[RMDB]
An RNA of 177 nucleotides, treated with 2A3 and DMS and read out base by base.
RNA sequence: GGGAACGACUCGAGUAGAGUCGAAAAGGCAGCAUCUGAGAGGGAGCCUGGUUGGAGAAGGGAGGGCCCCCAAGAGCAGAAUCACCAUGCACGGGAAUCGUCAUUCAUUGGCUGGAAUGCAGUUGCCGUUCACAUCCCUGUUCGCAGGGAUGUGAACAAAAGAAACAACAACAACAAC
Reactivity to 2A3 in 0.01 (KOAc 150mM, MgCl2 10mM, bicine 150mM(pH8.5), 24C), signal-to-noise 1, nucleotides 027 to 126: g000g000c010a000g030c010a040u030c030u030g080a050g000a050g070g010g010a030g010c040c000u040g030g010u080u110g000g040a180g030a080a070g000g010g050a060g000g000g000c030c030c010c010c010a080a040g010a010g030c020a000g030a040a020u050c030a000c000c020a050u100g000c040a010c060g020g040g000a050a050u120c050g080u030c030a070u110u060c020a030u040u170g050g000c030u060g040g050a110a040u100g000c010a030g030u050u040g010c000c010
Reactivity to DMS in 0.01 (KOAc 150mM, MgCl2 10mM, bicine 150mM(pH8.5), 24C), signal-to-noise 1, nucleotides 027 to 126: g010g010c020a070g010c090a110u000c050u010g010a110g010a120g010g010g000a080g010c040c040u000g000g040u020u010g000g010a100g020a110a040g010g020g000a150g010g010g020c010c030c010c000c040a030a120g000a060g000c040a030g010a080a090u000c120a100c100c060a130u000g030c120a030c020g000g000g000a010a060u000c090g000u000c050a020u000u000c020a140u010u010g000g010c040u020g010g020a100a040u000g000c080a060g000u000u010g020c050c000